Source: RMDB library M2RFPK, as collected in RNAgym. An RNA of 207 nucleotides, treated with 2A3 and DMS and read out base by base.
[RMDB]
RNA sequence: GGGAACGACUCGAGUAGAGUCGAAAAGAAAGAAAGAAAGCUGACCCUUCUCCUGACGGAUCUUGUGGAGCACCACAGUGCAGAAGGGGAGAGAAGCUUUAAUGCCGACCGUCUGGGCAGCCUUGAAAAAACGGAUUCUUCUUCGGAAGAAUCCGAACUACUAUCCAAUGUUCGCAUUGGAUAGUAGAAAAGAAACAACAACAACAAC
Reactivity to 2A3 in 0.01 (KOAc 150mM, MgCl2 10mM, bicine 150mM(pH8.5), 24C), signal-to-noise 4, nucleotides 027 to 156: g040a000a060a010g060a040a100a010g060a050a040a000g010c030u070g110a160c000c000c000u020u010c000u010c000c010u020g040a060c100g020g030a080u060c050u150u160g090u160g100g100a070g070c070a050c040c000a020c010a040g040u090g120c050a010g000a040a020g000g000g010g010a000g000a000g010a010a000g000c000u040u050u040a080a050u090g000c000c000g030a070c020c020g060u050c050u090g000g000g010c020a020g020c010c030u090u080g090a090a060a010a010a010a010c010g000g000a000u000u000c000u000u000c000u020u070c180g060g000a000a000g000a000a000u000c000c000g000a000a000
Reactivity to DMS in 0.01 (KOAc 150mM, MgCl2 10mM, bicine 150mM(pH8.5), 24C), signal-to-noise 3, nucleotides 027 to 156: g000a110a100a130g000a160a090a090g000a060a020a060g010c020u000g010a190c030c000c000u010u000c000u000c000c030u010g030a260c090g020g000a140u000c040u000u030g010u000g000g010a220g030c170a110c000c000a070c010a070g000u000g010c040a050g010a150a020g010g000g020g020a050g000a060g010a210a050g010c000u000u000u000a060a040u000g030c030c010g000a100c020c020g000u010c090u000g020g010g020c030a030g010c050c070u000u010g000a010a040a090a090a070a220c020g010g000a020u000u000c000u000u000c000u010u010c280g010g000a010a010g010a010a010u000c000c020g000a000a030
The reactions ran in a buffer of 150 mM KOAc, 10 mM MgCl2 and 150 mM bicine (pH 8.5), at 24 C. 2A3 adducts were read by reverse transcription with SuperScript II with manganese.